The record gives the reactivity of an RNA of 177 nucleotides to 2A3 and DMS.
For 2A3 the reverse transcriptase was SuperScript II with manganese.
RNA sequence: GGGAACGACUCGAGUAGAGUCGAAAACCCAAGGCUAAAUACGUCCCGAGUCCGAUAGCGCAAUAGUAGGGUGACCGAAAGCUGAAAAGAACCCCGAGAAGGGGAGUGAAAAGAGCCUGAAAUCGGCACCAUUUUAGAUCUUCGGAUCUAAAAUGGUAAAAGAAACAACAACAACAAC
Reactivity to 2A3 in 0.01 (KOAc 150mM, MgCl2 10mM, bicine 150mM(pH8.5), 24C), signal-to-noise 4, nucleotides 027 to 126: c020c000c010a010a030g040g000c030u050a100a100a040u190a080c020g050u040c030c010c010g040a020g090u010c000c030g030a040u060a050g070c040g000c050a040a080u020a040g040u010a010g010g000g050u040g030a040c010c010g030a070a050a030g010c010u020g030a020a030a070a010g040a060a060c010c000c000c000g020a050g120a110a050g040g000g020g010a000g010u020g010a030a020a100a080g070a040g020c020c010u000g060a040a120a030u110c030g000g000c020
Reactivity to DMS in 0.01 (KOAc 150mM, MgCl2 10mM, bicine 150mM(pH8.5), 24C), signal-to-noise 5, nucleotides 027 to 126: c000c010c000a130a100g020g000c060u020a030a130a070u030a070c080g010u000c010c020c030g000a150g020u010c030c020g010a070u020a030g010c040g000c050a090a060u030a080g030u000a100g000g000g000u010g010a090c030c020g000a060a110a120g010c010u000g000a060a060a130a110g020a160a160c030c000c000c000g010a100g030a130a180g010g000g020g000a040g010u020g000a040a070a080a070g000a210g000c000c020u010g010a030a060a060u020c070g010g010c160
About this RNA:
The RNA was probed in 150 mM KOAc, 10 mM MgCl2 and 150 mM bicine (pH 8.5) at 24 C.